An RNA of 177 nucleotides, treated with DMS and 2A3 and read out base by base. The RNA was probed in 150 mM KOAc, 10 mM MgCl2 and 150 mM bicine (pH 8.5) at 24 C. For DMS, 1,663 sequencing reads were counted. It was measured as part of the RMDB library OK2TRN.
[RMDB]
RNA sequence: GGGAACGACUCGAGUAGAGUCGAAAAGAAUGUGUAUGUAAGCUACAACUUCCGGUAGCUGCGUCACACUUUAAGAGUGUGCAUACAUAGCCGAAGCUCAGCUUCGGUCCCCCAAGGGAAGACCAAAGCUAUAGGACCGAUUCGUCGGUCCUAUAGCAAAAGAAACAACAACAACAAC
Reactivity to DMS in 0.01 (KOAc 150mM, MgCl2 10mM, bicine 150mM(pH8.5), 24C), signal-to-noise 2, nucleotides 027 to 126: g010a120a040u000g000u000g000u000a000u000g000u010a300a290g010c000u000a000c000a020a110c030u000u000c000c000g010g010u000a000g000c010u010g020c010g010u010c000a010c000a000c010u000u010u030a120a150g000a050g040u000g010u000g000c000a010u000a000c000a000u000a030g000c040c010g010a010a020g010c000u010c230a100g010c000u010u000c000g000g030u000c010c010c010c050c160a080a100g000g020g000a000a020g030a140c140c130a060a100a100
Reactivity to 2A3 in 0.01 (KOAc 150mM, MgCl2 10mM, bicine 150mM(pH8.5), 24C), signal-to-noise 2, nucleotides 027 to 126: g060a050a000u030g000u010g000u020a010u000g000u010a000a000g020c000u010a010c000a070a120c020u010u000c010c000g030g000u000a010g000c000u000g040c010g000u010c000a010c000a020c010u130u210u280a300a170g300a000g300u000g000u000g000c000a000u000a010c010a000u010a010g020c000c000g000a010a000g000c020u070c300a040g000c000u060u010c090g000g010u000c000c020c000c000c000a020a050g120g000g020a000a000g000a010c030c090a090a060a000